Background:
The record gives the reactivity of an RNA of 207 nucleotides to 2A3 and DMS. Source: RMDB library M2RFPK, as collected in RNAgym. The reactions ran in a buffer of 150 mM KOAc, 10 mM MgCl2 and 150 mM bicine (pH 8.5), at 24 C.
RNA sequence: GGGAACGACUCGAGUAGAGUCGAAAACCUGGUUUAGGGUUCCAGGCUAGCCCUAUCUAUCGGUCGGGAUGCGAGCGCUUAAGCUCAAAUUGAGUGGCUGAGUUAGUGGUGAACGUAUCCCUAUGUUAAAACGGUAGCUGCUUCGGCAGCUACCGAACCAAGCUUAUAGGUUCGCCUAUAAGCUUGGAAAAGAAACAACAACAACAAC
Reactivity to 2A3 in 0.01 (KOAc 150mM, MgCl2 10mM, bicine 150mM(pH8.5), 24C), signal-to-noise 3, nucleotides 027 to 156: c000c010u010g010g020u020u050u100a070g080g010g040u100u030c030c010a030g030g050c070u070a050g010c000c000c000u020a080u050c060u020a090u170c030g090g100u100c040g010g030g010a000u010g010c020g020a070g030c030g000c070u090u180a100a020g000c000u000c000a020a040a060u080u110g040a050g030u080g060g020c120u050g030a000g020u010u080a070g040u090g130g020u030g030a060a010c020g000u010a030u030c000c000c000u010a050u080g060u030u120a040a110a000a020c020g000g000u000a020g010c000u000g000c000u040u060c180g100g000c000a000g020c000u000a000c000c000g000a000a000
Reactivity to DMS in 0.01 (KOAc 150mM, MgCl2 10mM, bicine 150mM(pH8.5), 24C), signal-to-noise 1, nucleotides 027 to 156: c000c000u000g030g010u010u020u010a020g020g040g030u000u010c010c040a130g010g020c030u010a180g010c000c000c010u010a140u010c060u010a110u010c000g010g040u010c120g000g000g000a020u000g020c240g050a180g000c020g010c160u000u000a100a180g000c020u000c010a060a140a120u020u010g020a170g040u010g020g030c030u000g010a000g040u000u000a100g040u000g000g000u000g000a070a100c060g020u000a070u000c010c000c040u000a040u000g010u000u000a070a040a080a230c020g000g000u000a040g040c000u010g020c000u010u010c290g040g030c030a050g000c010u000a000c020c010g100a020a040